[RMDB]
RNA sequence: GGGAACGACUCGAGUAGAGUCGAAAAGUUUGCCCAGGUGCUGCAUUCAUGAUAAACAGUUUGCUGUUUGAUCAUAUAGCCUCCAGCGGAAUGCUGAGUUGGUCACAUCCCAAGGGCCUUCGGCUCCGCUUACAAAUGCCUUCGGGCAUUUGUAAGCAAAAGAAACAACAACAACAAC
Reactivity to DMS in 0.01 (KOAc 150mM, MgCl2 10mM, bicine 150mM(pH8.5), 24C), signal-to-noise 1, nucleotides 027 to 126: g010u000u010u010g010c030c010c010a120g000g020u010g020c060u010g010c080a050u000u000c150a030u000g010a020u000a020a010a020c000a010g010u000u000u020g040c020u000g010u010u000u000g040a030u000c020a030u010a160u020a150g020c010c040u010c080c090a070g030c020g000g000a080a040u010g030c040u000g000a070g010u010u000g020g010u000c030a100c130a120u000c030c030c010a130a160g020g010g010c010c000u000u010c050g050g000c010u000c020c140
Reactivity to 2A3 in 0.01 (KOAc 150mM, MgCl2 10mM, bicine 150mM(pH8.5), 24C), signal-to-noise 1, nucleotides 027 to 126: g000u020u020u080g000c000c000c000a000g180g000u110g000c080u020g000c030a090u030u150c000a020u150g010a020u040a030a000a000c000a040g050u120u280u300g200c030u000g010u000u000u100g150a030u010c030a010u090a010u090a130g000c000c020u000c010c030a000g010c000g020g130a280a080u170g010c000u020g010a030g090u100u040g090g000u000c030a020c000a260u030c060c040c010a050a030g000g010g020c050c000u090u080c070g000g000c010u030c010c000
Structure probing data (DMS and 2A3) for a 177-nucleotide construct. Conditions: 150 mM KOAc, 10 mM MgCl2 and 150 mM bicine (pH 8.5), 24 C. The DMS profile rests on 1,544 reads. It was measured as part of the RMDB library OK2TRN.